[RMDB]
RNA sequence: GGGAACGACUCGAGUAGAGUCGAAAACGCGCUUUGACGGUGGCCGGUUAUAAGACUCAAAUUGAGGUAAUAGAAGAUGUCAUCGACUACCAAUAUGUCAUCCGCUAAAAGCAUGUCAUCAACCGGGGGUUAUUCCAGGAUUCGUCCUGGAAUAACCAAAAGAAACAACAACAACAAC
Reactivity to 2A3 in 0.01 (KOAc 150mM, MgCl2 10mM, bicine 150mM(pH8.5), 24C), signal-to-noise 2, nucleotides 027 to 126: c020g010c010g000c050u140u070u060g050a060c050g030g050u010g040g020c020c040g040g000u040u010a150u020a050a100g050a050c000u000c050a110a210a250u160u160g020a020g050g070u040a090a040u050a130g130a120a020g020a020u110g050u050c010a060u060c060g030a030c030u070a090c020c010a080a070u100a090u130g010u000c000a050u040c020c020g040c110u050a080a080a020a060g040c030a040u040g000u070c010a060u060c010a060a100c000c030g000g010g000
Reactivity to DMS in 0.01 (KOAc 150mM, MgCl2 10mM, bicine 150mM(pH8.5), 24C), signal-to-noise 2, nucleotides 027 to 126: c070g010c110g010c060u020u000u000g030a060c060g000g040u010g010g040c050c080g020g000u010u020a080u010a120a180g000a080c000u010c020a060a040a160u010u010g010a090g010g000u010a020a060u000a120g010a070a100g010a040u000g000u000c050a080u000c020g000a090c100u010a110c050c060a080a080u010a100u000g020u000c050a050u010c030c060g010c020u010a070a040a080a080g000c050a030u000g010u000c050a080u000c040a050a100c050c020g000g000g010
This 177-nucleotide RNA was probed chemically with 2A3 and DMS. For 2A3 the reverse transcriptase was SuperScript II with manganese. The DMS profile rests on 1,527 reads. The reactions ran in a buffer of 150 mM KOAc, 10 mM MgCl2 and 150 mM bicine (pH 8.5), at 24 C.